RNA sequence: GGGAACGACUCGAGUAGAGUCGAAAACAAACCUUCGGGUUUGAGAUUACCUUUGUGCGAAUGGGAGCGAUACUACCCACCGGAAUUCCCCAUUGGGGUUAUCCGAGGUAUCGCAUCGAUCAUUCGCACUCUGGUCCACUGCCGCGUUCGCGCGGAAGGGGGGAGAAGUUUUCGAACUUCUCCCCCCAAAAGAAACAACAACAACAAC
Reactivity to 2A3 in 0.01 (KOAc 150mM, MgCl2 10mM, bicine 150mM(pH8.5), 24C), signal-to-noise 1, nucleotides 027 to 156: c000a000a000a000c000c010u060u060c240g120g000g000u000u000u020g000a000g000a010u160u220a040c000c030u000u030u100g030u000g000c000g000a000a000u000g010g070g020a010g000c000g010a000u010a010c010u060a040c010c120c120a050c030c010g140g000a120a290u180u150c000c040c050c060a190u280u300g010g010g010g090u080u070a130u080c000c000g000a010g000g000u000a010u040c010g000c010a130u060c010g020a050u070c000a000u000u000c000g010c010a000c000u000c050u000g000g000u020c030c010a060c060u090g030c000c040g090c020g100u110u150c220g020c000g050c030g170g000a020a120